An RNA of 177 nucleotides, treated with DMS and 2A3 and read out base by base. The data come from the RNA Mapping Database (RMDB), library OK1LIB. For 2A3 the reverse transcriptase was SuperScript II with manganese. Reactivities are given for positions 27 through 126. The reactions ran in a buffer of 150 mM KOAc, 10 mM MgCl2 and 150 mM bicine (pH 8.5), at 24 C. For 2A3, 33,338 sequencing reads were counted.
RNA sequence: GGGAACGACUCGAGUAGAGUCGAAAAUGAACGCCAGGAACACCGAGCGGAUUGAGAUCAACAACAUCAAAAACGCGAUCACCGCCACGAAGACCAGCACCAGCGGUUGCGUCGCGGACACCCGGUCUAAUUGUAGAACUUUCGAGUUCUACAAUUAAAAAGAAACAACAACAACAAC
Reactivity to DMS in 0.01 (KOAc 150mM, MgCl2 10mM, bicine 150mM(pH8.5), 24C), signal-to-noise 9, nucleotides 027 to 126: u010g010a080a060c070g020c020c020a130g010g020a090a080c090a060c030c040g000a150g010c020g010g000a110u010u010g010a120g010a060u010c080a090a110c200a090a090c180a060u020c100a040a060a060a080a100c060g010c050g000a030u000c060a060c030c020g000c010c060a090c140g000a080a080g000a090c050c050a070g010c030a080c060c110a100g010c030g000g010u010u010g020c110g000u010c060g020c020g000g000a070c110a100c030c020c020g000g010u020c070
Reactivity to 2A3 in 0.01 (KOAc 150mM, MgCl2 10mM, bicine 150mM(pH8.5), 24C), signal-to-noise 9, nucleotides 027 to 126: u100g010a040a010c020g010c020c020a040g050g060a070a040c040a030c050c030g020a020g020c020g030g020a040u050u160g080a080g030a060u120c020a010a120c020a030a040c010a060u130c080a040a080a060a010a020c040g000c020g010a010u040c020a010c030c010g010c020c020a090c090g040a060a020g060a080c030c040a020g020c020a030c030c010a020g020c010g030g000u050u090g030c050g030u020c010g000c000g000g010a010c020a040c020c010c000g010g010u020c030